[RMDB]
RNA sequence: GGGAACGACUCGAGUAGAGUCGAAAAUAGGUUGAAUUCGUUCAACCUACAGGCAAGCAAGCAGCCCAACGAGACAAGGCGAUAAUAAGAUAGCGCAUGCUGAUACAUCGGUCUUCGGACCGAUGAAGCUAACUACGGGAUUCGUCCCGUAGUUAGCAAAAGAAACAACAACAACAAC
Reactivity to 2A3 in 0.01 (KOAc 150mM, MgCl2 10mM, bicine 150mM(pH8.5), 24C), signal-to-noise 2, nucleotides 027 to 126: u020a010g000g010u010u000g010a030a020u100u080c190g030u080u010c020a010a000c000c000u010a040c010a000g060g000c030a010a080g000c000a060a030g000c020a060g000c000c010c010a060a050c040g050a000g030a070c050a060a060g030g020c030g040a030u060a120a050u120a180a000g110a150u080a030g000c070g000c050a030u100g010c020u030g030a020u040a220c010a000u010c000g010g000u000c000u000u040c250g070g000a000c000c000g000a000u000g000a000a000
Reactivity to DMS in 0.01 (KOAc 150mM, MgCl2 10mM, bicine 150mM(pH8.5), 24C), signal-to-noise 3, nucleotides 027 to 126: u000a000g000g000u010u020g000a030a030u000u020c170g020u000u000c010a000a010c000c000u000a010c130a080g020g020c050a040a080g030c150a070a090g010c030a060g010c010c010c030a090a070c140g010a110g020a020c110a070a050g000g020c030g010a070u000a090a040u010a080a120g010a160u000a030g010c090g040c050a070u010g000c050u010g020a160u000a190c030a010u000c000g000g000u000c010u000u010c200g020g000a000c000c000g000a000u010g010a090a090